[RMDB]
RNA sequence: GGGAACGACUCGAGUAGAGUCGAAAAGCUGGAAUGUCGAGCCGGAGAAAGCCCCGGUCAUCCGUAGCGUGAAGGAUUUCCUGGAGCCGGGCCUAUCCGUCGCAAUGGACAGUGCGUAUGGUGACGGCACAUUCCGAUCGUUCGCGAUCGGAAUGUGAAAAGAAACAACAACAACAAC
Reactivity to 2A3 in 0.01 (KOAc 150mM, MgCl2 10mM, bicine 150mM(pH8.5), 24C), signal-to-noise 1, nucleotides 027 to 126: g100c030u020g010g100a060a060u060g020u130c070g030a080g030c040c020g020g020a020g150a040a050a000g020c080c000c010c040g000g030u040c070a060u000c010c070g060u160a010g030c050g110u200g120a070a000g110g100a090u140u000u080c020c050u020g050g000a000g020c000c000g000g000g000c000c000u040a070u000c000c000g000u000c000g000c040a050a110u160g080g050a040c000a030g130u090g090c070g010u050a030u130g080g020u050g030a000c000g020g000
Reactivity to DMS in 0.01 (KOAc 150mM, MgCl2 10mM, bicine 150mM(pH8.5), 24C), signal-to-noise 2, nucleotides 027 to 126: g010c060u010g000g010a070a070u010g000u000c060g020a170g020c060c010g000g010a150g020a110a140a130g020c180c010c040c050g040g000u000c090a090u000c010c010g010u000a050g010c120g010u020g040a090a090g000g010a170u000u010u000c010c020u000g010g010a080g010c010c010g010g000g010c050c050u000a160u000c000c010g000u000c020g000c050a070a080u010g020g010a090c110a080g020u000g010c050g020u010a030u000g030g020u010g000a100c100g000g030